[RMDB]
RNA sequence: GGGAACGACUCGAGUAGAGUCGAAAAAUGGCUUGGCGUGCAGUCAGGGACCUGGGUGCUUCUUCCUUACCAUUGCCCUCGUUUUGGCUUCUGGCUCCAGCCUAGGUCUCAUGGCCCAUGGAGUCGGGUCAUAUACGAGCUUCGGCUCGUAUAUGACAAAAGAAACAACAACAACAAC
Reactivity to 2A3 in 0.01 (KOAc 150mM, MgCl2 10mM, bicine 150mM(pH8.5), 24C), signal-to-noise 1, nucleotides 027 to 126: a000u120g000g000c050u050u080g070g000c030g000u160g080c100a080g070u040c040a060g040g010g000a070c000c010u010g020g010g020u050g000c000u090u000c000u060u010c050c000u030u040a130c000c040a110u100u190g000c020c010c030u050c020g060u010u130u140u070g000g000c000u050u000c030u100g010g010c000u000c020c000a020g000c020c010u010a020g000g000u000c020u040c080a210u150g000g010c000c020c000a090u100g030g000a000g010u050c070g000g030
Reactivity to DMS in 0.01 (KOAc 150mM, MgCl2 10mM, bicine 150mM(pH8.5), 24C), signal-to-noise 3, nucleotides 027 to 126: a050u020g000g010c030u010u000g010g020c190g040u000g010c090a040g000u020c100a100g010g020g000a020c050c020u000g000g000g000u000g010c090u000u010c060u000u010c040c010u000u010a120c100c070a060u010u000g010c020c030c050u000c140g000u000u010u000u000g020g020c110u030u050c020u010g010g010c000u000c040c020a130g000c050c030u020a050g000g010u000c000u010c060a090u020g000g020c010c070c070a100u020g030g030a050g010u010c010g010g010